[RMDB]
RNA sequence: GGGAACGACUCGAGUAGAGUCGAAAAGCAACGGGAGGGAGGCCGGAAGCGCGAACCGGCCAAACGCGCACCAUGGAAAGAGCACAAAAUGAAGUUGAAGUGCUCACAACUUCACCCUCCCAACAAAAACUAAUAUAUUCUUCGGAAUAUAUUAGUUAAAAGAAACAACAACAACAAC
Reactivity to 2A3 in 0.01 (KOAc 150mM, MgCl2 10mM, bicine 150mM(pH8.5), 24C), signal-to-noise 2, nucleotides 027 to 126: g080c010a000a090c090g010g010g010a010g000g010g000a030g010g030c000c010g030g020a100a040g090c060g010c020g130a050a040c000c000g010g000c010c010a010a010a000c010g000c020g000c000a020c040c020a050u060g010g000a140a130a040g020a030g020c040a010c020a050a130a050a060u200g070a160a040g090u100u080g030a180a020g030u010g040c000u010c000a010c000a010a020c000u040u030c010a070c000c000c010u000c000c030c000a010a000c000a000a030a000
Reactivity to DMS in 0.01 (KOAc 150mM, MgCl2 10mM, bicine 150mM(pH8.5), 24C), signal-to-noise 3, nucleotides 027 to 126: g010c070a080a110c190g010g010g010a050g020g020g000a130g010g020c000c010g040g010a090a050g020c110g000c050g000a080a150c020c000g000g000c010c010a010a040a060c130g030c030g020c050a150c060c070a140u010g010g000a080a100a110g000a030g010c040a050c070a060a070a070a090u000g000a060a040g000u000u000g000a110a080g000u000g000c030u000c040a100c080a020a060c040u000u010c060a150c000c000c000u000c000c000c000a060a000c020a050a070a110